The data come from the RNA Mapping Database (RMDB), library TTRDES. This 177-nucleotide RNA was probed chemically with DMS and 2A3. The RNA was probed in 150 mM KOAc, 10 mM MgCl2 and 150 mM bicine (pH 8.5) at 24 C.

RNA sequence: GGGAACGACUCGAGUAGAGUCGAAAAGAUAUGGAUCGUCCCAGGACAUGCCUGGAGGUCGGAAACGACCUCGAGGCAACAGCCUGGACGAUCCUAAGUCAAACUUUCGCGCUUCGGCGCGAAAGAACGAGAACAUUCUGUUCGCAGAAUGUUCUCGAAAAGAAACAACAACAACAAC
Reactivity to DMS in 0.01 (KOAc 150mM, MgCl2 10mM, bicine 150mM(pH8.5), 24C), signal-to-noise 2, nucleotides 027 to 126: g020a020u000a100u010g000g000a000u000c000g000u000c150c080c050a020g000g000a040c100a090u010g040c010c010u010g000g040a040g000g000u000c010g030g000a020a020a030c000g020a010c000c010u000c030g010a030g020g000c000a020a010c160a200g000c010c010u010g000g010a000c000g010a000u000c010c000u010a000a100g000u000c010a160a150a290c010u000u010u000c000g020c000g010c000u000u010c290g030g010c030g030c000g010a000a000a030g000a090a130
Reactivity to 2A3 in 0.01 (KOAc 150mM, MgCl2 10mM, bicine 150mM(pH8.5), 24C), signal-to-noise 1, nucleotides 027 to 126: g000a010u030a010u040g020g000a000u000c030g000u100c150c200c010a000g040g060a030c170a250u300g020c000c020u120g230g010a000g000g020u000c020g000g000a020a020a000c010g000a020c000c000u000c000g050a000g030g000c020a010a000c040a000g020c000c000u000g000g010a010c010g000a000u000c000c000u000a000a000g020u000c010a130a050a120c010u020u010u010c030g010c000g010c090u110u100c300g150g000c000g000c000g000a000a000a000g000a010a000

For DMS, 1,698 sequencing reads were counted.